[RMDB]
RNA sequence: GGGAACGACUCGAGUAGAGUCGAAAAUAAAAUCGUAGGGCGAGACGAUCGACGUAAAUCGCUCAAACUACUCGAGACCAAAGGAAUACGCUUCGGUAACUCGCUCUUAUCCCGAGCGAUAAAUGAAUUAGCUUAGGAUAUUCGUAUCCUAAGCUAAAAAAGAAACAACAACAACAAC
Reactivity to 2A3 in 0.01 (KOAc 150mM, MgCl2 10mM, bicine 150mM(pH8.5), 24C), signal-to-noise 4, nucleotides 027 to 126: u050a000a020a020a030u050c010g000u020a040g000g010g000c020g000a010g030a050c040g020a050u070c030g070a060c020g030u050a000a060a120u060c040g010c050u040c110a020a030a030c020u040a000c010u000c020g020a020g020a050c020c020a120a020a030g120g030a120a100u090a120c030g010c090u010u080c020g010g000u020a050a070c000u000c010g000c010u010c020u050u070a070u060c020c010c010g000a010g000c020g040a050u080a070a150a070u170g090a020a110
Reactivity to DMS in 0.01 (KOAc 150mM, MgCl2 10mM, bicine 150mM(pH8.5), 24C), signal-to-noise 4, nucleotides 027 to 126: u020a080a100a130a120u000c030g020u000a080g020g000g000c060g000a010g010a060c050g000a080u000c070g020a070c060g010u010a030a060a080u000c060g000c040u000c080a090a110a150c040u000a010c040u000c020g010a020g010a120c060c040a060a080a100g000g010a110a120u000a050c100g000c050u010u000c140g010g000u010a060a100c090u000c000g000c000u000c000u000u010a140u010c050c010c020g020a050g020c010g000a050u000a030a070a060u000g010a140a130
This 177-nucleotide RNA was probed chemically with 2A3 and DMS. The 2A3 profile rests on 5,095 reads. It was measured as part of the RMDB library M2PK90. For 2A3 the reverse transcriptase was SuperScript II with manganese.